Notes
Structure probing data (2A3 and DMS) for a 207-nucleotide construct. For 2A3, 18,233 sequencing reads were counted. Conditions: 150 mM KOAc, 10 mM MgCl2 and 150 mM bicine (pH 8.5), 24 C. It was measured as part of the RMDB library RNAMAK.

[RMDB]
RNA sequence: GGGAACGACUCGAGUAGAGUCGAAAACGCUGGGUACCUAAUACAGUAUUCAACAGCCUACUGAAGCGCGCACGGUAGGACAUGAAUACGGUUCUAGGUACCUGUGCUGAAGCGCGCACGGCAACCGAAAGGUGCGACAGUGGAGUUCGCUCCACAAUCAUUAAGCUUGUUUCGACAAGCUUAAUGAAAAAGAAACAACAACAACAAC
Reactivity to 2A3 in 0.01 (KOAc 150mM, MgCl2 10mM, bicine 150mM(pH8.5), 24C), signal-to-noise 9, nucleotides 027 to 156: c030g000c010u020g000g000g000u000a000c000c000u030a050a030u200a170c090a050g000u000a010u000u010c020a110a110c060a290g120c010c000u020a010c010u030g070a230a060g010c020g000c000g000c010a010c020g010g000u000a000g000g190a180c050a140u130g000a000a000u000a000c010g010g010u090u070c080u030a000g000g000u000a000c000c000u000g000u010g000c000u030g020a130a050g000c000g000c000g000c000a010c010g010g020c010a040a030c010c000g040a110a020a030g000g000u010g010c010g030a040c070a090g000u010g000g010a020g010u070u160c170g080c110u000c010c000a010c000a000a060
Reactivity to DMS in 0.01 (KOAc 150mM, MgCl2 10mM, bicine 150mM(pH8.5), 24C), signal-to-noise 3, nucleotides 027 to 156: c070g010c020u000g000g010g020u000a000c030c000u030a080a140u010a080c050a040g010u000a000u000u000c000a040a100c100a180g020c010c010u020a030c010u000g000a030a070g020c020g040c010g000c010a300c050g000g000u000a020g020g030a090c030a210u010g000a010a020u000a020c010g030g020u000u010c080u000a020g010g020u010a000c000c000u000g010u000g030c010u000g010a070a070g030c020g040c000g020c000a300c030g010g010c030a070a070c020c000g020a120a070a160g030g030u000g010c010g000a100c110a150g000u000g010g000a080g000u000u010c030g030c000u010c010c000a020c000a040a300